The record gives the reactivity of an RNA of 177 nucleotides to 2A3 and DMS. The 2A3 profile rests on 24,026 reads.
RNA sequence: GGGAACGACUCGAGUAGAGUCGAAAAGAGCACAUGCGCGUACGUACUAUGGAUCUCGAGUACAGCGCUGAGCGAUCAGUACGAUCCGACUGAUCUACGGCCAUCGAUCGUACGUAGUACGUCAUCGUAAGCUUGUUACAUUCGUGUAACAAGCUUAAAAAGAAACAACAACAACAAC
Reactivity to 2A3 in 0.01 (KOAc 150mM, MgCl2 10mM, bicine 150mM(pH8.5), 24C), signal-to-noise 9, nucleotides 027 to 126: g080a020g030c080a060c040a190u190g040c060g010c030g060u060a000c000g000u000a010c000u010a020u030g050g020a070u020c020u010c040g010a020g070u150a130c090a110g020c070g000c120u010g020a060g070c070g000a000u000c010a000g010u080a190c060g050a170u080c120c100g010a000c010u010g000a010u000c020u030a040c030g020g000c010c010a050u020c010g010a020u020c020g010u010a020c010g000u010a010g000u000a000c010g010u010c010a070u080c020g030
Reactivity to DMS in 0.01 (KOAc 150mM, MgCl2 10mM, bicine 150mM(pH8.5), 24C), signal-to-noise 9, nucleotides 027 to 126: g000a120g020c060a100c140a070u000g010c090g010c120g000u010a030c040g010u000a010c010u000a020u000g000g010a080u010c240u000c020g000a030g010u000a100c230a130g010c140g020c010u000g010a140g020c150g000a010u000c010a030g000u000a050c080g000a090u010c140c110g000a020c020u000g000a030u000c020u000a140c150g000g010c010c030a100u000c020g000a030u000c210g010u000a110c020g010u000a010g010u000a020c020g000u000c110a080u000c090g010
Conditions: 150 mM KOAc, 10 mM MgCl2 and 150 mM bicine (pH 8.5), 24 C. 2A3 adducts were read by reverse transcription with SuperScript II with manganese. It was measured as part of the RMDB library OK2TRN.